Source: RMDB library 15KLIB, as collected in RNAgym. Chemical mapping of a 170-nucleotide RNA with 2A3 and DMS. Conditions: 150 mM KOAc, 10 mM MgCl2 and 150 mM bicine (pH 8.5), 24 C.
[RMDB]
RNA sequence: GGGAACGACUCGAGUAGAGUCGAAAAAUGAGUGUGCUCAGGUGCUAAGCGAAUAUGUUCUAUGUGGUGGUGGUUACUACGUCAAACCUGGAGGUACCAGUAGCGGAGAUGCCACCACUGCAUAUGCGGGGUGUACGGUUCGCCGUACACAAAAGAAACAACAACAACAAC
Reactivity to 2A3 in 0.01 (KOAc 150mM, MgCl2 10mM, bicine 150mM(pH8.5), 24C), signal-to-noise 9, nucleotides 027 to 129: a000u180g010a040g020u060g010u020g000c010u010c050a020g000g010u050g040c050u050a050a020g030c030g070a080a030u160a090u200g080u080u050c040u030a000u000g010u020g010g000u000g010g010u000g000g010u040u070a100c010u000a010c010g100u150c120a090a090a140c020c000u010g030g020a120g160g110u170a220c000c000a010g010u030a010g010c010g020g010a020g000a040u110g010c000c000a000c010c000a010c000u000g000c000a000u010a020u050g020c020g010g050g030
Reactivity to DMS in 0.01 (KOAc 150mM, MgCl2 10mM, bicine 150mM(pH8.5), 24C), signal-to-noise 9, nucleotides 027 to 129: a040u030g000a030g020u010g010u020g010c000u010c040a070g000g000u020g000c050u020a050a060g010c070g020a100a070u050a060u020g000u000u010c060u000a030u000g020u000g000g030u030g010g000u000g000g010u010u020a170c000u000a020c010g030u010c090a030a110a120c300c000u000g010g010a240g020g030u040a160c010c000a000g000u000a260g010c020g000g010a030g010a300u050g000c000c000a000c000c000a000c010u010g000c000a000u000a010u020g000c080g030g020g020